An RNA of 177 nucleotides, treated with 2A3 and read out base by base. The 2A3 profile rests on 723 reads. The reactions ran in a buffer of 150 mM KOAc, 10 mM MgCl2 and 150 mM bicine (pH 8.5), at 24 C. For 2A3 the reverse transcriptase was SuperScript II with manganese. Values cover nucleotides 27 to 126. Source: RMDB library OK1LIB, as collected in RNAgym.

[RMDB]
RNA sequence: GGGAACGACUCGAGUAGAGUCGAAAAUGGAUCGCGUCGCUCUUCAUAUUGUUAUUUACGCUUUCCUUGUCAGGGGAUUCAUCCAUAUGAACUACGUUAUCCCUAUAAGCUGCGUUAUCCAUAUGAGCGUCGGUACCGUGUUCGCACGGUACCGACGAAAAGAAACAACAACAACAAC
Reactivity to 2A3 in 0.01 (KOAc 150mM, MgCl2 10mM, bicine 150mM(pH8.5), 24C), signal-to-noise 2, nucleotides 027 to 126: u060g020g020a050u020c000g030c060g060u060c030g030c010u040c020u140u030c000a010u070a140u070u080g050u050u070a180u230u090u080a070c140g020c000u000u010u110c000c010u000u020g270u130c170a160g070g000g000g000a000u040u050c030a280u000c060c000a000u020a060u060g030a010a020c010u070a070c110g150u050u090a120u050c050c000c000u050a160u020a090a030g030c070u030g000c000g020u000u020a040u000c020c000a000u010a090u210g030a010g040